[RMDB]
RNA sequence: GGGAACGACUCGAGUAGAGUCGAAAAAAGCCUAGCUAGGGAGGUAUCGAAAACUGUUUGUUGAAGUGGCGUAAUUCUCCCUAUGUAAGCUCCCUUACUAAAAGUAAUACAUAAAGAAUUAUGAAAGGAGUAAGAAGGCUUUCGAGCCUUCUUACUCAAAAGAAACAACAACAACAAC
Reactivity to DMS in 0.01 (KOAc 150mM, MgCl2 10mM, bicine 150mM(pH8.5), 24C), signal-to-noise 1, nucleotides 027 to 126: a110a090g000c000c010u010a050g010c020u000a000g000g000g010a020g000g010u000a130u010c090g000a060a110a010a040c070u000g000u050u010u030g000u010u000g000a010a300g000u000g040g040c000g050u000a040a020u040u010c000u010c000c010c000u010a000u010g000u000a010a100g010c000u000c010c000c000u000u010a170c130u010a080a170a100a260g000u000a010a140u020a080c010a010u050a000a080a120g000a070a000u000u000a020u040g000a220a050a170g000
Reactivity to 2A3 in 0.01 (KOAc 150mM, MgCl2 10mM, bicine 150mM(pH8.5), 24C), signal-to-noise 1, nucleotides 027 to 126: a010a000g150c010c000u000a000g010c040u090a080g000g000g000a000g010g000u060a080u300c010g030a000a000a000a200c030u090g040u040u030u000g130u030u240g020a040a000g000u020g060g050c040g000u000a010a010u040u000c000u000c000c000c000u000a000u030g000u000a000a000g000c000u240c050c000c000u000u020a030c010u040a150a050a050a000g070u040a000a090u020a100c000a000u140a030a300a000g000a000a150u010u010a000u060g000a050a000a140g120
An RNA of 177 nucleotides, treated with DMS and 2A3 and read out base by base. For DMS, 1,248 sequencing reads were counted. The RNA was probed in 150 mM KOAc, 10 mM MgCl2 and 150 mM bicine (pH 8.5) at 24 C. It was measured as part of the RMDB library RFM100. Values cover nucleotides 27 to 126.